The record gives the reactivity of an RNA of 177 nucleotides to 2A3 and DMS.
DMS adducts were read by reverse transcription with MarathonRT.
The RNA was probed in 150 mM KOAc, 10 mM MgCl2 and 150 mM bicine (pH 8.5) at 24 C.
For 2A3 the reverse transcriptase was SuperScript II with manganese.
RNA sequence: GGGAACGACUCGAGUAGAGUCGAAAAUCGCCUUUUCUUCCUUUCUUCUACCCACUGUUCGAGGAUCUCCUCCCUCUCCUUCGAGGACGGGUUCGCGACGGGUUGGCUCAUCCUGAGAUCGGGGAGCGUAUUAAGUGGGGUUCGCCCCACUUAAUACAAAAGAAACAACAACAACAAC
Reactivity to 2A3 in 0.01 (KOAc 150mM, MgCl2 10mM, bicine 150mM(pH8.5), 24C), signal-to-noise 2, nucleotides 027 to 126: u050c040g110c000c000u070u040u040u000c010u040u090c000c030u050u050u080c020u110u020c030u080a050c040c000c010a060c050u080g060u160u060c030g020a030g000g040a040u010c050u080c020c000u060c030c000c000u020c020u050c000c030u090u160c050g020a030g000g020a020c020g000g020g020u000u000c020g000c000g020a030c010g020g040g010u010u050g030g020c010u020c030a120u070c030c020u040g030a080g010a130u090c030g000g000g010g000a010g040c030
Reactivity to DMS in 0.01 (KOAc 150mM, MgCl2 10mM, bicine 150mM(pH8.5), 24C), signal-to-noise 3, nucleotides 027 to 126: u010c080g010c040c020u010u000u000u010c030u000u000c020c030u000u000u000c030u010u000c030u000a150c040c020c020a140c120u000g010u000u000c030g020a080g020g000a050u010c050u000c030c030u000c060c010c020u000c040u010c070c100u010u000c110g010a060g010g000a070c210g010g010g010u000u000c060g010c010g010a050c090g010g000g010u000u010g020g010c010u000c050a070u010c020c020u010g010a130g000a070u000c070g000g000g000g000a060g020c110